[RMDB]
RNA sequence: GGGAACGACUCGAGUAGAGUCGAAAAGUGAAAGCUCCUUCUCUCGCAAUGUGUAACUCAUGAUUCUCAUGACCCCUGGUUGGAGAGAUCCGGACUAGAAGCCAGGGGGCCUCUGAUUCUGCCAGCCAAAACUGUCGUAAGUUCGCUUACGACAGAACACUUGUGUGAACUUCGGUUCACACAAGUGAAAAGAAACAACAACAACAAC
Reactivity to 2A3 in 0.01 (KOAc 150mM, MgCl2 10mM, bicine 150mM(pH8.5), 24C), signal-to-noise 2, nucleotides 027 to 156: g050u080g050a130a040a060g040c020u020c010c010u040u060c050u030c040u040c020g030c050a030a080u090g030u010g020u120a050a050c030u020c040a000u050g040a160u170u070c120u030c090a040u070g070a070c000c000c000c000u010g000g030u060u140g050g010a020g010a000g010a050u040c100c050g080g000a050c030u100a100g040a130a000g030c000c000a000g010g010g010g010g010c000c020u030c010u020g050a100u150u060c020u090g050c000c010a050g000c060c000a030a050a100a160c010u000g010u000c010g010u010a000a000g020u020u120c150g010c120u000u000a000c000g010a000c000a000g000a010a010
An RNA of 207 nucleotides, treated with 2A3 and read out base by base. 2A3 adducts were read by reverse transcription with SuperScript II with manganese. Source: RMDB library M2RFPK, as collected in RNAgym. Conditions: 150 mM KOAc, 10 mM MgCl2 and 150 mM bicine (pH 8.5), 24 C.